The record gives the reactivity of an RNA of 177 nucleotides to 2A3 and DMS. It was measured as part of the RMDB library TTRDEL. For 2A3, 21,004 sequencing reads were counted.
RNA sequence: GGGAACGACUCGAGUAGAGUCGAAAAGAUAUGGAGAGAACUACGUGCAAUGUUAAGCAUCGAUCUCGGAAACGAGGGAGCUUAAUGACACGCUCUCCUAAGUCAAACCACGACUUCGGUCGUGGAACCUAGUGCUUAAGUUCGCUUAAGCACUAGGAAAAGAAACAACAACAACAAC
Reactivity to 2A3 in 0.01 (KOAc 150mM, MgCl2 10mM, bicine 150mM(pH8.5), 24C), signal-to-noise 7, nucleotides 027 to 126: g050a030u090a030u140g000g000a010g000a000g010a150a080c130u170a050c300g010u010g010c050a100a150u230g010u050u020a000a010g010c020a150u300c050g060a130u010c010u000c000g020g000a080a060a020c010g000a000g000g010g020a010g000c000u020u010a010a010u080g110a060c000a000c010g010c000u000c000u000c000c000u010a130a010g030u020c040a060a040a090c000c000a010c010g000a000c010u050u080c250g130g000u000c000g000u010g010g000a000a010
Reactivity to DMS in 0.01 (KOAc 150mM, MgCl2 10mM, bicine 150mM(pH8.5), 24C), signal-to-noise 5, nucleotides 027 to 126: g000a050u000a300u020g000g000a030g010a020g010a060a030c120u020a300c040g020u010g010c100a110a080u010g010u000u000a000a010g010c010a210u000c150g000a030u010c000u000c000g000g000a100a080a190c000g000a010g000g000g000a040g020c000u000u000a000a000u000g010a150c010a020c000g000c010u010c000u000c000c000u010a020a060g000u010c050a070a100a210c010c000a010c000g000a010c000u000u020c190g030g010u000c000g020u000g010g020a020a040